[RMDB]
RNA sequence: GGGAACGACUCGAGUAGAGUCGAAAAGAUAUGGAGCCCGUAGACAUGCUGAAUGUCGGAAACGACAUGAACAGCAACAGCUACGGCUCCUAAGUCAAAGCAGCAUCGCGUUCGCGCGAUGCUGCAAGAUAGUCCUGGAGUUCGCUCCAGGACUAUCAAAAGAAACAACAACAACAAC
Reactivity to 2A3 in 0.01 (KOAc 150mM, MgCl2 10mM, bicine 150mM(pH8.5), 24C), signal-to-noise 1, nucleotides 027 to 126: g000a000u040a010u100g000g030a000g010c290c030c040g000u010a010g000a050c160a240u300g000c020u000g030a290a030u010g000u000c000g000g010a020a010a000c010g000a000c020a020u140g190a300a200c040a030g000c060a100a110c010a300g010c050u000a000c010g000g000c000u000c010c010u020a040a010g000u020c020a050a050a180g000c000a010g060c010a020u040c070g030c040g130u100u200c280g030c050g000c050g290a000u010g000c000u000g020c020a020a000
Reactivity to DMS in 0.01 (KOAc 150mM, MgCl2 10mM, bicine 150mM(pH8.5), 24C), signal-to-noise 1, nucleotides 027 to 126: g050a040u000a150u030g010g000a010g020c240c070c090g060u000a000g000a060c160a300u000g000c000u000g010a170a030u000g000u000c000g010g010a050a020a100c010g020a000c000a010u000g010a200a210c060a060g000c000a050a050c270a170g030c030u000a000c020g000g000c010u000c010c000u000a010a100g010u000c030a080a130a200g030c020a040g000c030a000u000c000g080c000g010u010u030c300g060c000g010c000g030a000u000g000c000u000g000c000a030a000
This 177-nucleotide RNA was probed chemically with 2A3 and DMS. For DMS the reverse transcriptase was MarathonRT. 2A3 adducts were read by reverse transcription with SuperScript II with manganese. The DMS profile rests on 731 reads. Values cover nucleotides 27 to 126. The 2A3 profile rests on 1,404 reads.